[RMDB]
RNA sequence: GGGAACGACUCGAGUAGAGUCGAAAACGCUUGAGCCCAGGAGUUCUGGGCUGUAGUGCGCUAUGCCGAUCGGGUGUCCGCACUAAGUUCGGCAUCAAUAUGGUGACCUCCCGGGAGCGGGGGACCAAAAUAUUGAACACUUCGGUGUUCAAUAUUUAAAAGAAACAACAACAACAAC
Reactivity to DMS in 0.01 (KOAc 150mM, MgCl2 10mM, bicine 150mM(pH8.5), 24C), signal-to-noise 8, nucleotides 027 to 126: c030g010c010u000u010g000a030g020c000c000c000a010g000g010a220g020u040u020c000u000g000g000g020c000u000g000u010a040g030u020g010c060g010c120u010a030u000g010c000c010g010a020u000c050g010g000g000u000g000u010c290c180g000c010a030c010u010a070a100g010u000u000c010g000g010c000a020u000c160a080a090u040a140u000g000g000u000g000a150c150c000u000c010c010c010g010g000g030a160g010c080g010g000g000g010g000a040c020c020a050
Reactivity to 2A3 in 0.01 (KOAc 150mM, MgCl2 10mM, bicine 150mM(pH8.5), 24C), signal-to-noise 9, nucleotides 027 to 126: c010g010c010u030u150g180a010g000c000c000c000a010g060g100a280g100u300u200c000u000g010g020g000c010u000g000u010a010g010u020g030c070g000c080u050a010u040g000c000c000g030a050u030c050g090g000g000u020g030u040c040c120g090c030a000c020u040a080a130g010u010u010c000g000g000c000a010u020c010a020a150u120a080u230g010g020u060g110a200c000c000u030c000c020c000g040g100g020a130g080c150g010g000g000g000g010a000c000c000a030